[RMDB]
RNA sequence: GGGAACGACUCGAGUAGAGUCGAAAAGACUACACUGACUUGGACACUUGGCCUUUUGCGGGUUUGAGAGGUAAGCGUCGCGGCCUGCUUCCAGGCUACCCUGAUUUUGGUUCGUGGCUCCUCCUGAUUUGCAAUCUAGAUUCGUCUAGAUUGCAAAAAAAGAAACAACAACAACAAC
Reactivity to DMS in 0.01 (KOAc 150mM, MgCl2 10mM, bicine 150mM(pH8.5), 24C), signal-to-noise 7, nucleotides 027 to 126: g000a090c050u010a090c080a070c060u000g010a090c050u000u020g000g000a090c070a060c060u010u010g010g000c020c030u010u000u000u010g010c070g000g000g000u000u010u020g010a080g000a080g010g010u010a080a090g020c070g010u010c060g020c090g010g000c040c010u000g010c100u010u010c080c040a070g010g000c060u000a060c070c020c020u000g010a090u010u010u020u010g010g010u010u010c070g030u010g010g010c030u000c020c020u000c020c010u010g000a180
Reactivity to 2A3 in 0.01 (KOAc 150mM, MgCl2 10mM, bicine 150mM(pH8.5), 24C), signal-to-noise 7, nucleotides 027 to 126: g020a030c040u060a010c080a020c040u080g080a040c020u040u070g070g030a010c020a010c070u030u070g060g010c010c000u050u110u070u130g050c070g030g060g000u070u120u160g120a140g010a010g040g030u110a110a030g020c030g040u060c020g020c000g020g020c000c020u020g010c030u080u020c090c020a010g030g000c030u050a070c020c000c000u030g090a110u020u100u060u090g050g010u060u070c030g020u030g020g000c010u000c010c000u010c000c000u030g030a080

Source: RMDB libraries RFM100 and RFMREP, as collected in RNAgym. The record gives the reactivity of an RNA of 177 nucleotides to DMS and 2A3. The reactions ran in a buffer of 150 mM KOAc, 10 mM MgCl2 and 150 mM bicine (pH 8.5), at 24 C. 2A3 adducts were read by reverse transcription with SuperScript II with manganese. For DMS the reverse transcriptase was MarathonRT. As a SHAPE reagent, 2A3 marks flexible, mostly unpaired nucleotides at the ribose 2'-OH.